[RMDB]
RNA sequence: GGGAACGACUCGAGUAGAGUCGAAAAAGAUGCGAGUUGGCACAAGCACUGCAUGGUCUCUUGCAGAUAAUUCAUAACACGCAGCCCUCAACGAUGAAGGCUGCGUCUCCCGAGAGAACGGGACCGGGAUUAAUGUCGCGUUCGCGCGACAUUAAUCAAAAGAAACAACAACAACAAC
Reactivity to 2A3 in 0.01 (KOAc 150mM, MgCl2 10mM, bicine 150mM(pH8.5), 24C), signal-to-noise 4, nucleotides 027 to 126: a000g050a000u060g010c030g010a050g040u100u080g130g020c030a030c020a090a050g000c030a020c100u040g010c020a040u090g000g030u000c010u000c000u040u030g000c000a000g040a130u150a100a050u170u040c090a030u070a130a010c010a000c050g000c000a000g000c010c000c010u030c020a140a170c170g140a050u260g030a020a000g000g000c000u000g000c000g000u000c000u000c000c000c020g020a060g020a000g010a080a020c040g000g000g010a000c000c020g080g040
Reactivity to DMS in 0.01 (KOAc 150mM, MgCl2 10mM, bicine 150mM(pH8.5), 24C), signal-to-noise 3, nucleotides 027 to 126: a080g000a160u000g010c030g030a120g000u000u000g010g000c090a070c120a040a110g020c040a250c080u000g000c000a030u060g010g010u010c020u000c040u000u040g010c020a020g010a130u010a020a100u010u050c080a120u020a100a080c240a020c000g000c000a010g010c020c010c000u000c000a050a180c300g030a080u010g020a020a050g010g010c000u000g000c000g000u000c060u000c000c010c040g000a180g010a120g000a060a040c090g000g000g000a040c040c060g020g030
Structure probing data (2A3 and DMS) for a 177-nucleotide construct.
Values cover nucleotides 27 to 126.
2A3 adducts were read by reverse transcription with SuperScript II with manganese.